[RMDB]
RNA sequence: GGGAACGACUCGAGUAGAGUCGAAAAGUGCAGCUGCCCAGGCCCUAUCCAGCUUCCCCACAGGCAAGGGGUUUGCUCUUUGAGGUACAUCCAUUAAUGGGCACUGCUCUGGGUGCUAACGGGCCUCGUAAGAGGAGGCAUUCGUGCCUCCUCUUACAAAAGAAACAACAACAACAAC
Reactivity to 2A3 in 0.01 (KOAc 150mM, MgCl2 10mM, bicine 150mM(pH8.5), 24C), signal-to-noise 2, nucleotides 027 to 126: g030u020g020c020a010g030c040u040g010c010c000c040a010g040g000c020c020c000u070a080u100c060c050a010g000c000u030u010c020c000c040c000a080c030a030g160g040c020a030a110g000g040g000g000u010u020u050g010c010u030c010u080u100u150g050a060g040g040u080a110c020a130u030c090c000a040u060u160a130a080u190g000g000g000c000a010c020u020g000c000u000c010u020g020g030g020u080g040c040u020a110a070c070g050g070g010c030c030u050c070
Reactivity to DMS in 0.01 (KOAc 150mM, MgCl2 10mM, bicine 150mM(pH8.5), 24C), signal-to-noise 4, nucleotides 027 to 126: g030u010g020c030a060g000c300u000g000c010c020c010a080g010g010c060c020c020u000a060u000c090c100a050g010c040u000u000c020c000c010c100a110c190a130g040g030c190a110a100g010g000g010g030u000u000u000g010c010u000c040u000u020u000g000a070g020g020u010a050c120a080u010c040c030a100u000u030a110a110u000g000g010g010c010a060c050u000g010c010u010c050u000g010g010g010u000g010c080u000a070a110c150g010g000g000c030c000u000c180